[RMDB]
RNA sequence: GGGAACGACUCGAGUAGAGUCGAAAAAAAAUCCAUUCAUGGUUAACCAAUUGGCUUAUAGCUCUAGUGCAAAUGGCAGCCUGGUUGGCACAACUUUGCAGGGCAAGCCUAUUGGUAUGUUCUUCCCCCCUUAUACCACGUUCGCGUGGUAUAAGGGAAAAGAAACAACAACAACAAC
Reactivity to 2A3 in 0.01 (KOAc 150mM, MgCl2 10mM, bicine 150mM(pH8.5), 24C), signal-to-noise 1, nucleotides 027 to 126: a000a040a050a000u030c020c010a010u010u130c050a060u140g020g010u000u070a030a000c000c000a010a000u010u020g010g020c030u040u080a050u150a250g000c010u000c040u050a110g160u060g070c000a000a020a040u060g060g050c070a020g070c010c020u170g270g120u190u120g080g000c020a020c000a100a020c050u000u020u000g000c020a020g000g000g020c000a010a000g000c000c000u000a000u010u000g000g020u000a000u080g070u030u000c030u020u010c020c000c010
Reactivity to DMS in 0.01 (KOAc 150mM, MgCl2 10mM, bicine 150mM(pH8.5), 24C), signal-to-noise 2, nucleotides 027 to 126: a020a010a090a070u000c000c030a030u000u000c210a130u000g010g000u010u000a130a000c010c000a000a000u010u000g000g000c000u000u030a120u000a200g010c000u010c010u010a120g020u010g000c010a020a020a010u000g000g010c230a150g000c000c000u000g020g000u020u000g000g000c000a060c110a120a090c190u010u000u000g020c000a050g000g000g000c020a050a010g000c000c000u000a010u000u000g030g020u000a010u000g010u000u000c150u000u000c020c010c030